[RMDB]
RNA sequence: GGGAACGACUCGAGUAGAGUCGAAAAAUAGCGUACACGUGGGACGGAUUGAUGUAGCCACCGGUAAAGCUGAUCUGCCAGUCAGUGGUCACGCCAUCGGCGUCGAACACGUCUGUCGCGUAGCGCAUGCUGUCAGAGAAUUCGUUCUCUGACAGCAAAAAGAAACAACAACAACAAC
Reactivity to DMS in 0.01 (KOAc 150mM, MgCl2 10mM, bicine 150mM(pH8.5), 24C), signal-to-noise 3, nucleotides 027 to 126: a100u010a080g000c020g020u020a190c150a020c040g020u010g010g000g000a000c010g000g010a050u020u020g000a080u000g040u010a180g000c030c030a060c120c040g000g000u000a040a150a160g000c000u030g020a080u010c080u030g000c080c080a220g000u020c130a060g000u040g010g030u040c130a010c110g000c040c050a050u010c150g010g010c030g000u020c050g010a080a060c080a050c000g000u000c020u000g000u020c020g050c030g000u000a090g000c010g000c030a180
Reactivity to 2A3 in 0.01 (KOAc 150mM, MgCl2 10mM, bicine 150mM(pH8.5), 24C), signal-to-noise 5, nucleotides 027 to 126: a000u110a010g010c010g000u040a050c030a010c110g020u050g070g130g000a010c000g010g030a030u110u200g060a070u160g070u060a020g010c000c010a030c020c020g030g000u070a110a070a000g020c020u030g000a060u060c050u140g080c050c010a070g070u130c010a030g030u020g080g010u060c010a010c090g020c020c010a120u090c090g000g010c020g020u050c040g040a060a020c050a000c060g020u000c020u060g090u090c020g000c010g020u030a050g010c010g000c040a010
Source: RMDB library OK1LIB, as collected in RNAgym. This 177-nucleotide RNA was probed chemically with DMS and 2A3. For DMS the reverse transcriptase was MarathonRT. For 2A3, 4,630 sequencing reads were counted.